[RMDB]
RNA sequence: GGGAACGACUCGAGUAGAGUCGAAAAUCUGGGUACUAGGUAUUGUGAAGGCUGACUCGGUCUACAAUACCUUACCCAUAGACUACUAGAAGUCUAGACCGAGUUAGCCUUUAGACAUUAGUGGUCACUACAGCAUACUAUUCGUAGUAUGCUGUAGAAAAGAAACAACAACAACAAC
Reactivity to 2A3 in 0.01 (KOAc 150mM, MgCl2 10mM, bicine 150mM(pH8.5), 24C), signal-to-noise 5, nucleotides 027 to 126: u040c010u010g000g010g050u030a060c080u070a060g000g030u020a020u040u110g040u020g040a020a010g010g010c010u030g020a070c020u000c010g000g010u000c010u020a020c030a020a030u030a070c000c000u010u010a000c000c000c000a000u050a010g000a000c010u020a010c000u020a060g060a300a020g080u010c000u010a010g000a000c000c000g000a020g040u050u070a000g000c000c000u000u000u010a020g000a000c010a020u040u020a010g030u020g050g060u010c020a000
Reactivity to DMS in 0.01 (KOAc 150mM, MgCl2 10mM, bicine 150mM(pH8.5), 24C), signal-to-noise 9, nucleotides 027 to 126: u010c050u000g010g000g010u000a030c210u010a010g010g020u000a030u000u010g010u000g010a020a010g010g010c010u000g010a080c050u000c000g000g010u000c000u000a040c110a030a050u000a040c070c040u000u000a020c040c020c030a070u000a030g010a030c010u000a060c080u010a070g010a100a080g010u000c010u000a010g000a010c000c000g000a020g010u000u000a060g010c000c000u000u000u000a030g000a020c030a080u010u000a030g020u000g010g010u000c020a300